[RMDB]
RNA sequence: GGGAACGACUCGAGUAGAGUCGAAAAGCUUCUCUUCGGAGAAGCAAAAAAACCUUUGUGUCCAAGAUUCCGAUAAGUUCUUUAACGCCCAUUGGGCGUUAUGGAACUUUUGACGGAAUUGGACACUCUGGUAAAAACUCGAUGUUCGCAUCGAGAACAAAAUAAGUCGUUUCGACGACUUAUUUUGAAAAGAAACAACAACAACAAC
Reactivity to 2A3 in 0.01 (KOAc 150mM, MgCl2 10mM, bicine 150mM(pH8.5), 24C), signal-to-noise 2, nucleotides 027 to 156: g000c000u040u020c010u010c000u020u050c220g030g000a020g000a000a020g010c050a020a000a000a180a000a000a050c000c010u000u020u020g000u000g020u010c000c000a140a090g060a300u080u000c000c000g020a020u010a040a010g000u000u030c000u000u010u000a000a000c000g000c000c010c100a300u240u300g000g000g000c000g000u000u000a000u000g010g000a000a000c000u000u000u000u000g030a040c000g010g000a010a040u000u000g000g000a000c000a000c000u010c000u000g010g000u120a150a150a040a020a010c000u010c000g000a010u000g060u090u080c270g000c110a000u000c000g010a000g010a020a020
Reactivity to DMS in 0.01 (KOAc 150mM, MgCl2 10mM, bicine 150mM(pH8.5), 24C), signal-to-noise 2, nucleotides 027 to 156: g020c000u000u020c010u000c010u000u020c240g040g000a010g010a040a000g010c000a000a000a070a080a030a050a020c010c010u000u000u000g030u000g000u000c000c000a020a040g010a230u010u000c000c010g000a150u000a030a000g000u020u000c000u000u000u010a000a010c010g010c020c000c010a290u000u000g030g100g040c000g020u000u000a000u010g000g000a010a020c020u000u000u000u000g010a250c080g000g020a050a060u010u000g000g020a020c000a000c020u010c020u000g010g010u000a030a120a060a080a140c000u010c000g010a010u000g020u000u000c300g020c010a020u000c000g020a010g010a110a170